[RMDB]
RNA sequence: GGGAACGACUCGAGUAGAGUCGAAAAAAAACAUUCGGACCAUCGGUCUACCGAGCAAUAUCACCCGCUCGGUGGAAGAUCGUCCCUCCGUCGUAAAGAAACUCGUUCCGUUCGCGGAACGAGUUUCCUUAUCAAGACAGUUCGCUGUCUUGAUAAGAAAAGAAACAACAACAACAAC
Reactivity to 2A3 in 0.01 (KOAc 150mM, MgCl2 10mM, bicine 150mM(pH8.5), 24C), signal-to-noise 2, nucleotides 027 to 126: a000a010a000a010c090a080u200u140c040g010g010a010c000c020a020u030c020g180g100u030c020u010a010c000c000g020a000g000c000a060a120u120a060u300c080a160c050c020c060g020c000u000c000g000g020u000g000g000a030a010g000a000u000c010g000u000c010c000c000u010c020c030g130u130c030g090u130a040a120a080g020a000a000a000c000u020c000g000u000u010c010c010g020u060u080c190g030c000g020g000a000a000c010g010a000g000u000u000u000c000
Reactivity to DMS in 0.01 (KOAc 150mM, MgCl2 10mM, bicine 150mM(pH8.5), 24C), signal-to-noise 3, nucleotides 027 to 126: a050a020a030a100c120a120u020u010c140g010g000a030c020c070a040u000c020g000g010u000c010u000a020c000c000g000a010g000c010a120a080u000a070u020c210a110c180c110c100g020c010u000c000g010g000u000g020g000a030a060g000a010u000c250g010u000c000c010c060u010c040c040g010u000c120g000u000a080a100a090g000a010a000a010c000u000c000g000u000u000c010c000g010u000u010c180g010c010g010g000a010a000c010g000a010g000u000u000u000c000